[RMDB]
RNA sequence: GGGAACGACUCGAGUAGAGUCGAAAAGUCUGAAGUGUCCCAGCUAAAAUAAAUCGAUCUUGCGGGCAGCCCGUUGGCAGGAGGCGUGAGGAAUCCGUCUCUCUGUCUGGUGCGGCAAGGUAGUUCUGGGUCCCUUAGGGGCUCCACCUUCACCGCUUCCUUAUCAAUUGUUCGCAAUUGAUAAGGAAAAAGAAACAACAACAACAAC
Reactivity to 2A3 in 0.01 (KOAc 150mM, MgCl2 10mM, bicine 150mM(pH8.5), 24C), signal-to-noise 2, nucleotides 027 to 156: g050u020c040u060g050a050a040g060u010g040u060c000c000c000a010g000c030u120a020a090a220a280u280a060a140a120u240c080g040a040u030c030u030u030g000c060g060g090g020c030a040g030c000c000c050g120u210u130g000g030c000a010g000g000a000g000g000c010g060u300g010a030g060g150a100a110u040c000c000g000u010c000u000c000u010c000u000g010u030c000u020g030g020u050g020c010g000g000c000a000a000g020g020u020a060g010u130u040c020u040g030g000g000u000c010c030c040u030u110a100g000g000g010g000c000u010c000c020a020c000c000u050u060c060a060c040c020g000c040u000

Background
Structure probing data (2A3) for a 207-nucleotide construct. 2A3 adducts were read by reverse transcription with SuperScript II with manganese. It was measured as part of the RMDB library ARCHII.